[RMDB]
RNA sequence: GGGAACGACUCGAGUAGAGUCGAAAACGAAAGGAAGUAAACUAUCGCCUGAACCCCAUAGGAGACGUAUGCCAUGGACUGCAGCGAAGGAAUACGUACCGGGUGUUGUUCUCAAUGCACGGGAUAAGACGACGAUAUGGUUCGCCAUAUCGUCGUCAAAAGAAACAACAACAACAAC
Reactivity to 2A3 in 0.01 (KOAc 150mM, MgCl2 10mM, bicine 150mM(pH8.5), 24C), signal-to-noise 1, nucleotides 027 to 126: c050g120a120a030a000g080g060a130a090g040u090a060a130a020c040u080a040u300c030g000c000c000u010g000a060a030c000c050c050c020a030u050a030g010g070a080g030a010c040g090u110a060u300g040c040c000a000u000g020g000a000c040u110g040c030a050g000c000g110a100a000g050g040a210a000u110a120c070g000u000a030c000c000g010g010g000u020g000u050u040g020u130u070c000u120c000a000a000u060g020c070a040c030g140g000g030a040u120a300a040
Reactivity to DMS in 0.01 (KOAc 150mM, MgCl2 10mM, bicine 150mM(pH8.5), 24C), signal-to-noise 1, nucleotides 027 to 126: c020g030a060a090a000g000g050a020a080g000u020a000a090a010c030u010a090u000c020g000c020c000u020g040a220a170c040c020c000c000a120u000a150g020g050a150g010a130c030g020u000a060u020g000c020c010a200u020g000g000a030c000u000g000c040a020g010c000g050a180a120g030g000a030a020u030a010c100g000u000a020c020c040g000g000g030u000g000u030u000g000u000u000c170u000c180a030a100u080g000c170a050c160g000g000g080a020u000a160a060
Chemical mapping of a 177-nucleotide RNA with 2A3 and DMS.
Source: RMDB library OK1LIB, as collected in RNAgym.
High DMS reactivity at an A or C suggests that its Watson-Crick edge is free.
The reactions ran in a buffer of 150 mM KOAc, 10 mM MgCl2 and 150 mM bicine (pH 8.5), at 24 C.
Values cover nucleotides 27 to 126.